[RMDB]
RNA sequence: GGGAACGACUCGAGUAGAGUCGAAAAACAAGUAUCAAAAAUUUGAAAAGGAUCAAAUCAUUGAUUCUCUAAAACGAGGAGUCCAACAGUUAACUCGGCUUCGACACCCUCGACUUCUUACUGUCCAGCAUCCUUUAGAAGAAUCCAGGGAUUGCUACUCAUAAUGACCGUUCGCGGUCAUUAUGAGAAAAGAAACAACAACAACAAC
Reactivity to 2A3 in 0.01 (KOAc 150mM, MgCl2 10mM, bicine 150mM(pH8.5), 24C), signal-to-noise 2, nucleotides 027 to 156: a010c060a090a010g060u050a020u150c100a040a120a140a160a200u060u140u150g070a120a120a060a050g120g010a010u020c000a030a120a060u120c040a070u030u040g000a020u070u000c030u000c030u130a080a060a020a020c030g010a040g010g010a020g020u020c040c040a020a050c040a130g030u110u140a050a050c120u030c060g020g030c030u030u040c050g010a020c020a040c030c010c000u020c010g070a070c010u100u000c000u060u090a050c060u090g130u070c010c020a020g020c020a070u030c000c020u090u080u080a100g030a110a020g040a090a030u080c080c050a010g000g010g010a040u040u080g030c010u040a030